[RMDB]
RNA sequence: GGGAACGACUCGAGUAGAGUCGAAAAAGCGGGCGAGUCGCCUGCUCCGGUCCAUGCCCGGGCACUCGACCGAACCCCGAUUCCGGCACGUGAUGAUGCUCUUGGUGACCGGCCUCGCCGCCCGCGCUAAUUAUGCUGCUUUCGAGCAGCAUAAUUAAAAAGAAACAACAACAACAAC
Reactivity to 2A3 in 0.01 (KOAc 150mM, MgCl2 10mM, bicine 150mM(pH8.5), 24C), signal-to-noise 2, nucleotides 027 to 126: a000g010c000g010g010g020c030g020a080g040u240c020g050c020c030u010g030c010u010c000c010g010g000u030c100c060a130u160g050c000c000c050g020g000g010c010a030c020u020c010g060a070c040c040g040a080a090c070c000c000c010g100a130u120u100c060c050g030g020c050a050c130g070u080g020a090u070g040a050u080g030c010u010c020u080u180g090g020u030g030a180c000c000g010g020c000c000u040c020g000c000c040g000c000c000c000g000c000g010c000
Reactivity to DMS in 0.01 (KOAc 150mM, MgCl2 10mM, bicine 150mM(pH8.5), 24C), signal-to-noise 4, nucleotides 027 to 126: a090g000c010g020g010g020c000g000a100g000u010c080g040c060c030u000g020c080u000c020c020g030g000u000c060c300a110u010g010c160c020c180g000g010g020c020a040c040u000c020g000a100c030c020g010a070a160c080c040c030c080g000a110u010u000c040c010g000g020c070a080c060g000u000g010a130u010g010a150u010g010c090u000c050u000u010g010g010u000g010a060c020c020g000g020c300c090u000c040g010c070c020g010c030c020c020g020c050g010c140
Description:
Chemical mapping of a 177-nucleotide RNA with 2A3 and DMS. For DMS, 3,591 sequencing reads were counted. The data come from the RNA Mapping Database (RMDB), library OK2TST. The 2A3 profile rests on 2,215 reads.